RNA sequence: GGGAACGACUCGAGUAGAGUCGAAAAUGUGUUUCAGCCAAUAGGGAACGCAGAUGCGAAAGCAGGGCCUAACGAACCACCUAGUUCCCUCUUUAUGAGGGCAGGUGAUAAGAGAGAAGUUACCCCACAGUACUUCGAUGUUCGCAUCGAAGUACUGAAAAGAAACAACAACAACAAC
Reactivity to DMS in 0.01 (KOAc 150mM, MgCl2 10mM, bicine 150mM(pH8.5), 24C), signal-to-noise 1, nucleotides 027 to 126: u010g010u000g050u000u000u000c040a040g020c130c130a070a120u000a150g020g000g000a080a080c030g020c000a050g000a200u030g000c030g000a000a120a170g000c020a110g030g000g000c020c010u000a040a060c040g010a110a050c130c010a010c000c000u000a100g030u030u020c010c000c000u000c000u020u000u010a030u030g010a000g010g000g030c080a030g000g000u010g000a040u000a050a140g020a130g030a050g030a030a150g000u010u020a140c050c000c050c220a180
Reactivity to 2A3 in 0.01 (KOAc 150mM, MgCl2 10mM, bicine 150mM(pH8.5), 24C), signal-to-noise 1, nucleotides 027 to 126: u050g020u000g000u010u020u030c100a100g020c070c030a100a150u100a240g060g000g030a050a000c010g000c050a030g000a080u060g040c020g050a140a000a000g000c000a000g010g000g050c000c030u020a080a040c040g020a000a000c030c000a000c000c050u000a030g060u150u110c000c000c010u020c010u040u300u070a270u300g000a030g030g000g000c000a000g000g020u010g000a000u050a040a050g150a000g030a000g000a020a050g000u020u050a220c020c000c000c000a020
Annotation:
This 177-nucleotide RNA was probed chemically with DMS and 2A3. The 2A3 profile rests on 1,053 reads. The data come from the RNA Mapping Database (RMDB), library RFMREP. Reactivities are given for positions 27 through 126. The reactions ran in a buffer of 150 mM KOAc, 10 mM MgCl2 and 150 mM bicine (pH 8.5), at 24 C.